[RMDB]
The data come from the RNA Mapping Database (RMDB), library M2PK50. An RNA of 177 nucleotides, treated with DMS and 2A3 and read out base by base. The DMS profile rests on 6,074 reads.
RNA sequence: GGGAACGACUCGAGUAGAGUCGAAAACAUGGAUCGUUCGCGAUCCAUGGCAGGUGGUGGUGGGACCAGCGGACCCAGGCUUUUGGCAUCCCAGCCUUUCCAAUCCAGCCUAUUUCGAUAGGCUGAACAUGAAAAACACGUUCGCGUGUUUUUCAUGAAAAGAAACAACAACAACAAC
Reactivity to DMS in 0.01 (KOAc 150mM, MgCl2 10mM, bicine 150mM(pH8.5), 24C), signal-to-noise 4, nucleotides 027 to 126: c020a010u000g000g010a010u000c030g010u000u000c230g030c010g020a000u000c000c010a000u000g010g010c140a070g000g010u010g010g020u000g000g030u000g000g000g000a070c070c040a050g030c060g000g010a110c070c020c040a090g010g000c060u000u000u010u000g020g000c020a100u000c030c020c010a140g010c040c030u000u000u010c010c020a100a150u020c120c010a010g020c000c000u000a010u000u000u000c160g010a020u000a010g000g000c000u000g000a020a070
Reactivity to 2A3 in 0.01 (KOAc 150mM, MgCl2 10mM, bicine 150mM(pH8.5), 24C), signal-to-noise 3, nucleotides 027 to 126: c000a000u000g000g010a000u010c020g020u110u080c280g000c010g110a010u000c000c000a000u010g000g000c040a020g040g050u090g010g030u050g000g100u060g030g020g030a030c020c010a010g010c040g030g030a030c020c020c030a040g050g030c030u120u110u130u170g030g000c010a050u060c030c010c000a020g050c010c020u020u050u000c040c000a040a050u030c030c010a010g010c010c000u020a000u020u130u030c090g070a020u000a030g000g000c000u000g010a010a010
Record summary:
2A3 adducts were read by reverse transcription with SuperScript II with manganese.